[RMDB]
Structure probing data (2A3 and DMS) for a 207-nucleotide construct. For DMS the reverse transcriptase was MarathonRT. The RNA was probed in 150 mM KOAc, 10 mM MgCl2 and 150 mM bicine (pH 8.5) at 24 C. The DMS profile rests on 3,150 reads. For 2A3, 2,446 sequencing reads were counted.
RNA sequence: GGGAACGACUCGAGUAGAGUCGAAAAGUAAGGCUAUGGGCCCGAGAGAAGUCGCUCUCUCUCGCCCUUCACAACCUUCUCGGCAUUGAGAUGACCAUAGGCCAGAAGUGAGUCUUUAAGUAGACACAGCUGAUCUAAGGCGUUGUGUAGGGGCACGGUUGAAUUACAUCUUCGGAUGUAAUUCAACAAAAGAAACAACAACAACAAC
Reactivity to 2A3 in 0.01 (KOAc 150mM, MgCl2 10mM, bicine 150mM(pH8.5), 24C), signal-to-noise 4, nucleotides 027 to 156: g030u060a000a060g040g010c040u050a060u110g060g100g040c000c060c040g000a010g000a000g000a070a040g050u120c030g010c020u060c000u000c000u000c020u040c120g000c000c010c000u020u030c000a000c000a000a020c000c010u040u010c000u030c120g010g040c060a040u040u170g040a070g050a120u140g080a100c010c070a130u150a080g000g060c010c000a000g010a000a000g030u040g000a010g010u000c000u050u230u040a300a300g300u090a080g030a000c010a000c020a030g020c000u030g010a110u070c040u090a080a030g000g000c020g000u000u010g020u000g010u050a030g000g010g020g010c030a000c070g050
Reactivity to DMS in 0.01 (KOAc 150mM, MgCl2 10mM, bicine 150mM(pH8.5), 24C), signal-to-noise 1, nucleotides 027 to 156: g010u010a080a000g010g020c010u000a080u000g030g010g030c020c040c030g010a070g010a050g010a090a120g030u010c120g000c120u000c060u000c010u000c000u000c030g000c020c000c020u000u010c040a020c010a030a050c020c120u020u000c000u000c090g020g000c070a160u000u030g010a100g010a140u000g020a100c030c040a160u000a080g020g000c030c020a070g030a130a110g020u010g030a210g050u000c010u010u000u000a100a250g040u000a030g010a080c010a100c010a170g010c000u000g000a100u000c130u000a110a170g020g000c060g030u000u000g000u000g010u000a050g000g020g050g000c060a090c090g020